RNA sequence: GGGAACGACUCGAGUAGAGUCGAAAAUAAAACACGUAACGUGAGCACAGUCGGUAGUGCAGCAGGACCGAAACCUGCAGCGAAAGGGAUCUAGACCCUGUUCGCGCAAAAACCGAAGAAAAAAAAACAUAAUUUCUAGUUUCGACUAGAAAUUAUGAAAAGAAACAACAACAACAAC
Reactivity to 2A3 in 0.01 (KOAc 150mM, MgCl2 10mM, bicine 150mM(pH8.5), 24C), signal-to-noise 2, nucleotides 027 to 126: u120a000a090a000a000c020a000c030g110u240a300a020c110g020u020g110a020g000c000a000c000a000g080u020c010g010g030u010a000g000u000g000c020a000g010c000a000g060g000a100c040c060g040a060a040a020c000c030u000g000c040a030g000c010g020a000a010a000g020g000g010a030u070c060u190a070g160a240c000c000c000u030g190u000u010c000g010c020g000c020a000a000a060a000a040c000c030g000a040a020g030a110a040a000a000a000a000a020a000a000
Reactivity to DMS in 0.01 (KOAc 150mM, MgCl2 10mM, bicine 150mM(pH8.5), 24C), signal-to-noise 2, nucleotides 027 to 126: u000a100a060a090a120c010a020c030g020u020a090a070c100g000u020g010a190g010c000a010c000a040g010u010c000g010g000u010a030g010u000g000c020a090g020c010a000g020g010a080c040c050g020a080a050a060c010c000u000g000c010a180g020c000g000a010a060a020g010g010g000a180u010c180u010a200g010a100c020c000c000u000g000u000u000c020g020c000g000c200a050a020a050a050a030c000c010g010a030a170g010a060a000a000a020a110a100a110a030a160
This 177-nucleotide RNA was probed chemically with 2A3 and DMS. It was measured as part of the RMDB library M2PK90. For 2A3, 1,849 sequencing reads were counted. For DMS, 1,367 sequencing reads were counted. The RNA was probed in 150 mM KOAc, 10 mM MgCl2 and 150 mM bicine (pH 8.5) at 24 C.